[RMDB]
RNA sequence: GGGAACGACUCGAGUAGAGUCGAAAAGAAUCACCGUACCUAUUUAGGUUUACGCUCCAAGAUCGGUGGAUAGCAGCCCUAUCAAUAUCGAGGAGAACUGUGCUAUGUUUAGAAGAUUAGGUAGUCUAUUACACAGCCAUGUUCGCAUGGCUGUGAAGUUAUUGCCAGGAUUCGUCCUGGCAAUAACAAAAGAAACAACAACAACAAC
Reactivity to DMS in 0.01 (KOAc 150mM, MgCl2 10mM, bicine 150mM(pH8.5), 24C), signal-to-noise 1, nucleotides 027 to 156: g020a090a120u040c040a230c030c030g030u020a040c020c010u010a150u000u000u000a090g020g000u000u000u020a060c020g010c000u000c010c010a010a190g040a050u000c040g060g080u000g020g010a160u000a070g060c000a210g000c130c100c030u000a120u000c040a040a070u010a080u000c060g020a230g000g000a060g030a120a110c010u000g010u000g000c020u000a080u000g020u000u000u000a080g000a090a150g010a030u000u000a090g040g000u010a130g020u010c020u000a110u000u000a180c000a040c010a020g000c010c000a010u000g040u010u000c300g040c010a010u000g000g010c010u000g040u000g010a000a060
Reactivity to 2A3 in 0.01 (KOAc 150mM, MgCl2 10mM, bicine 150mM(pH8.5), 24C), signal-to-noise 3, nucleotides 027 to 156: g090a010a060u060c010a000c060c020g040u060a050c000c030u090a150u190u230u150a050g030g010u010u080u110a060c070g010c000u010c020c000a040a050g040a100u040c030g020g060u070g060g020a020u050a040g020c050a020g000c070c000c040u020a060u020c040a070a040u040a020u160c050g000a050g000g000a030g030a080a070c090u070g020u010g090c010u030a030u130g080u030u130u060a130g040a180a040g010a100u130u000a080g020g020u020a030g020u010c040u060a110u090u210a070c000a000c000a000g000c000c010a000u000g000u030u020c110g000c140a000u000g020g000c000u000g000u000g000a000a010